[RMDB]
RNA sequence: GGGAACGACUCGAGUAGAGUCGAAAAGGCGGAUGUGCCCAAAGGCAAGGGGGCAGCCUCUAUCACUCUUCUAGAUGGGAGAGAGUGGGUAUCAUAACGCUAUCCCUCAAUGAUGGCAUAUCCUGCUUGGAGAGGAGGGUUUUUUGAUGCACUGCCACGGUAUCGAGGGGUUCGCCCCUCGAUACCGAAAAGAAACAACAACAACAAC
Reactivity to 2A3 in 0.01 (KOAc 150mM, MgCl2 10mM, bicine 150mM(pH8.5), 24C), signal-to-noise 1, nucleotides 027 to 156: g040g020c020g020g100a050u030g010u030g000c000c000c000a090a020a020g100g030c030a080a000g050g000g050g010g010c000a000g040c080c010u080c000u030a100u160c010a060c010u000c010u010u030c040u000a150g040a300u230g080g040g020a030g000a000g000a020g070u080g000g090g010u080a040u170c080a050u080a120a080c140g030c040u050a060u060c030c060c000u030c040a000a170u170g070a000u070g060g020c040a040u000a000u090c000c080u050g020c040u000u040g010g020a030g000a030g060g030a020g000g000g000u110u000u060u060u060u020g040a040u030g080c040a060c100u140g010c030c040a010